Structure probing data (DMS and 2A3) for a 177-nucleotide construct. It was measured as part of the RMDB libraries RFM100 and RFMREP.

[RMDB]
RNA sequence: GGGAACGACUCGAGUAGAGUCGAAAAAUGGGACAUGUGCUUUUAUUAGGCUAAAACCAAGUGAUCGCAAGAUCGUUAUAUUGGUUGAACUCUAGAUAAAAUGCAGAUCGUAUGGUCUUGUACCGACUUCGCAGGUUAAUUUCGAUUAACCUGCGAAAAAAGAAACAACAACAACAAC
Reactivity to DMS in 0.01 (KOAc 150mM, MgCl2 10mM, bicine 150mM(pH8.5), 24C), signal-to-noise 4, nucleotides 027 to 126: a060u040g000g010g000a050c050a060u020g000u000g010c010u000u000u000u000a010u010u000a020g000g000c010u000a040a070a000a010c000c000a000a010g040u030g020a000u000c000g000c300a140a130g000a000u000c010g010u010u010a070u050a100u010u010g000g000u010u000g000a050a160c300u020c020u000a080g020a030u020a000a000a000a010u040g040c030a050g000a060u010c100g000u030a040u000g000g000u000c000u000u000g000u000a110c040c040g010a120c140
Reactivity to 2A3 in 0.01 (KOAc 150mM, MgCl2 10mM, bicine 150mM(pH8.5), 24C), signal-to-noise 3, nucleotides 027 to 126: a000u150g020g000g030a010c040a050u140g030u030g080c010u000u000u000u020a000u000u010a010g010g030c000u050a070a000a000a000c000c000a000a020g040u020g040a000u000c000g000c040a030a090g000a020u010c000g010u090u050a140u040a080u300u040g000g000u000u000g000a000a020c040u010c000u020a010g010a260u000a020a030a000a040u280g040c030a040g070a110u140c040g050u270a110u150g020g010u000c000u030u030g000u020a060c010c010g010a030c090